[RMDB]
Annotation:
Structure probing data (2A3) for a 207-nucleotide construct. 2A3 adducts were read by reverse transcription with SuperScript II with manganese. The reactions ran in a buffer of 150 mM KOAc, 10 mM MgCl2 and 150 mM bicine (pH 8.5), at 24 C.
RNA sequence: GGGAACGACUCGAGUAGAGUCGAAAACUUAUCCGGUUUUAACGCUGUUUUAUUGGCGUAAAGGUUUACGGAUAAACAACUAAUAAUUAAACCUUUUGUGUGCGAAACGUGGUUGUUUAACGUACUCACUGCCCCCAGGGAUUCGUCCCUGGGGGAAGAACGCAAACAUCUUCGGAUGUUUGCGUUCAAAAGAAACAACAACAACAAC
Reactivity to 2A3 in 0.01 (KOAc 150mM, MgCl2 10mM, bicine 150mM(pH8.5), 24C), signal-to-noise 1, nucleotides 027 to 156: c000u000u010a010u010c000c000g000g060u010u000u000u030a090a000c000g000c020u030g170u210u130u100u260a160u080u300g010g000c000g010u000a040a000a000g010g040u000u040u000a000c000g000g000a020u070a070a080a000c060a030a000c040u270a040a120u140a180a050u170u190a030a060a020c040c000u010u160u090u180g030u010g010u010g030c090g140a170a000a000c010g040u130g060g000u110u010g030u010u000u060a050a020c020g000u000a000c000u010c010a100c010u060g010c000c000c000c000c010a000g010g030g010a000u000u060c140g030u010c110c000c000u000g000g000g000g000g030a000a000